Record summary:
Structure probing data (2A3 and DMS) for a 177-nucleotide construct. For DMS, 1,005 sequencing reads were counted. The reactions ran in a buffer of 150 mM KOAc, 10 mM MgCl2 and 150 mM bicine (pH 8.5), at 24 C.
[RMDB]
RNA sequence: GGGAACGACUCGAGUAGAGUCGAAAAUCUUUAAAUGAUGUAUAUCGUAGCCUUAAAGUUGGCAAAGUUAUUAAUGACGGUUGUUGGUUCACUCCUUGUGCUAAUUCACAGUCAUACUUGCAAACAACCGAUUAGGCAAUUUCGAUUGCCUAAUCGGAAAAGAAACAACAACAACAAC
Reactivity to 2A3 in 0.01 (KOAc 150mM, MgCl2 10mM, bicine 150mM(pH8.5), 24C), signal-to-noise 1, nucleotides 027 to 126: u150c020u150u300u300a010a040a070u110g000a000u000g040u000a040u000a010u300c040g000u000a110g070c070c000u000u200a000a300a000g200u140u150g000g030c010a000a000a000g070u200u200a240u240u240a040a020u070g000a070c000g000g170u000u130g050u000u000g160g020u300u300c000a150c050u300c000c110u100u300g000u000g000c000u000a000a000u070u030c040a070c070a000g020u010c000a000u090a050c000u000u000g000c000a300a000a000c110a000a000
Reactivity to DMS in 0.01 (KOAc 150mM, MgCl2 10mM, bicine 150mM(pH8.5), 24C), signal-to-noise 1, nucleotides 027 to 126: u000c000u000u020u020a290a000a070u010g000a050u000g000u000a050u020a050u030c070g000u000a090g190c010c020u000u000a210a140a280g000u000u080g000g000c050a060a080a080g000u000u180a090u000u000a000a110u000g020a050c000g000g000u000u000g000u000u000g010g000u000u000c190a180c070u000c040c130u000u000g060u000g000c160u000a000a110u010u040c050a000c000a170g000u000c000a000u000a010c130u090u000g000c010a070a050a160c060a080a050